[RMDB]
The record gives the reactivity of an RNA of 177 nucleotides to DMS and 2A3. 2A3 adducts were read by reverse transcription with SuperScript II with manganese. The RNA was probed in 150 mM KOAc, 10 mM MgCl2 and 150 mM bicine (pH 8.5) at 24 C. It was measured as part of the RMDB library OK1LIB. DMS adducts were read by reverse transcription with MarathonRT.

RNA sequence: GGGAACGACUCGAGUAGAGUCGAAAAUCUGAGCUUCUCCAAAUCUGCUGAAAGUUCCAAAAGUUCAUCCUUUGAGAGGCCACCAGCUCUCAGGACAACAUUGUGCUGAGUAGAUCUCAUUGACAUCCACUAUAACUCUGUUCGCAGAGUUAUAGUGAAAAGAAACAACAACAACAAC
Reactivity to DMS in 0.01 (KOAc 150mM, MgCl2 10mM, bicine 150mM(pH8.5), 24C), signal-to-noise 8, nucleotides 027 to 126: u020c030u000g000a090g000c130u010u010c010u000c030c060a070a110a090u010c030u000g000c030u020g000a070a080a080g010u010u010c110c030a040a070a100a110g000u010u000c070a100u000c030c030u000u010u010g000a030g010a070g000g000c030c030a060c050c080a090g020c020u000c000u000c020a020g010g000a030c180a070a110c110a120u030u010g020u010g000c000u000g000a030g000u010a020g000a050u020c020u000c030a050u020u030g000a120c160a070u040c090
Reactivity to 2A3 in 0.01 (KOAc 150mM, MgCl2 10mM, bicine 150mM(pH8.5), 24C), signal-to-noise 9, nucleotides 027 to 126: u040c030u040g020a010g040c020u040u010c020u020c020c010a030a050a130u040c030u060g020c010u040g060a120a090a040g050u080u070c030c010a070a070a020a030g020u050u050c030a040u070c040c020u070u140u100g040a050g010a010g050g050c020c010a070c020c020a040g010c000u000c000u000c010a000g030g010a010c010a070a040c030a120u130u160g010u040g050c000u010g010a010g020u090a030g050a100u010c020u010c040a090u050u100g020a060c020a060u040c030